[RMDB]
RNA sequence: GGGAACGACUCGAGUAGAGUCGAAAAAAGCCGAGUCGAGCGCCGUGGUGUCGGAUAGCUUCGGCAAUCAGUACGCGGUGGACCGCGCCCUGCUGCUGGGCGGCCAGGCUCUGGCGCAAGCCUGGGCGUAAUGAACGUCAUUCGUGACGUUCAUUACAAAAGAAACAACAACAACAAC
Reactivity to 2A3 in 0.01 (KOAc 150mM, MgCl2 10mM, bicine 150mM(pH8.5), 24C), signal-to-noise 3, nucleotides 027 to 126: a000a000g020c010c010g030a010g010u030c020g020a020g050c020g010c010c020g070u080g050g050u100g050u090c070g040g040a100u100a130g020c040u130u140c040g010g000c000a000a040u050c000a010g050u050a020c040g000c020g040g020u110g100g090a080c030c010g010c010g010c030c000c000u060g020c030u030g000c010u020g000g050g020c000g010g040c010c000a020g020g010c000u010c040u060g000g000c000g000c010a010a010g000c000c010u040g030g010g000c010
Reactivity to DMS in 0.01 (KOAc 150mM, MgCl2 10mM, bicine 150mM(pH8.5), 24C), signal-to-noise 6, nucleotides 027 to 126: a100a100g010c010c010g010a060g020u000c030g000a240g010c160g010c020c020g020u000g010g010u010g010u000c040g010g010a080u010a110g010c040u010u000c040g020g010c010a030a060u000c030a040g010u000a040c040g010c010g000g010u000g020g010a160c030c020g010c040g000c040c030c010u000g010c210u000g000c040u010g010g010g020c010g010g000c020c030a050g010g000c030u000c020u010g000g000c010g010c080a150a120g000c040c000u000g000g010g020c080

Structure probing data (2A3 and DMS) for a 177-nucleotide construct. For DMS, 12,440 sequencing reads were counted. The data come from the RNA Mapping Database (RMDB), library OK2TRN. For DMS the reverse transcriptase was MarathonRT.